[RMDB]
RNA sequence: GGGAACGACUCGAGUAGAGUCGAAAAACUUUUAGCGAUUAUCGUUAUAGAAAUGUCCUUGGCAUAUGGCUAUGCACAGAGGUAUUAGUAGCGCAAUAGCUAUUGAAGGACAUUACCUCUCAAAUAAUAAGUCAGAAUGAUUCGUCAUUCUGACUUAAAAAGAAACAACAACAACAAC
Reactivity to DMS in 0.01 (KOAc 150mM, MgCl2 10mM, bicine 150mM(pH8.5), 24C), signal-to-noise 3, nucleotides 027 to 126: a070c040u000u000u000u000a030g010c000g020a300u010u020a080u010c010g020u000u000a030u010a010g000a070a050a010u000g010u000c000c000u000u000g000g020c070a040u000a020u000g010g000c040u000a010u000g000c020a050c060a110g010a110g020g030u010a120u010u010a090g000u010a080g040c050g010c030a030a060u000a040g010c010u000a010u000u010g010a030a020g000g000a020c020a000u000u000a070c110c090u000c060u010c060a080a070a060u000a070a110
Reactivity to 2A3 in 0.01 (KOAc 150mM, MgCl2 10mM, bicine 150mM(pH8.5), 24C), signal-to-noise 3, nucleotides 027 to 126: a000c030u130u140u100u170a000g000c020g080a070u110u100a130u300c000g010u010u010a070u010a070g110a030a050a000u020g020u030c000c000u020u020g110g010c050a070u040a020u230g000g000c000u000a000u020g010c030a000c020a050g220a090g070g190u200a160u220u170a110g090u070a030g000c010g000c040a070a170u010a000g000c000u020a000u020u030g040a000a010g000g000a000c000a000u010u020a020c010c010u000c010u010c030a090a140a020u120a080a060